[RMDB]
RNA sequence: GGGAACGACUCGAGUAGAGUCGAAAAUGCUCCAUCCGAAACGUACGAGCCUGCUGAGUGUGGAUGGGAAAGCAUGCAUGCAAGCUCGUGGCAUGCGAAAGGAUGGCGUUAGCCUUGCGUACGGAAACCAUCCAGCGAGUCCCCAUCCGAAACGUACCGGUCGGCCUGAAUUCGUUCAGGCCGACCGAAAAGAAACAACAACAACAAC
Reactivity to 2A3 in 0.01 (KOAc 150mM, MgCl2 10mM, bicine 150mM(pH8.5), 24C), signal-to-noise 1, nucleotides 027 to 156: u170g000c000u000c020c000a050u010c000c020g040a060a120a130c020g010u010a000c030g030a020g050c000c080u110g000c020u080g040a110g040u170g050u100g000g000a000u000g000g000g000a010a010a010g000c000a000u130g000c000a020u030g010c000a000a130g000c000u000c000g000u010g000g000c000a030u040g000c010g050a060a040a040g010g000a000u010g020g000c030g030u080u120a030g030c030c000u100u130g000c000g050u050a090c050g020g010a000a140a000c010c030a020u040c000c000a030g000c030g090a000g030u070c010c000c010c000a020u030c000c020g020a120a090a110c060g000u090a060c000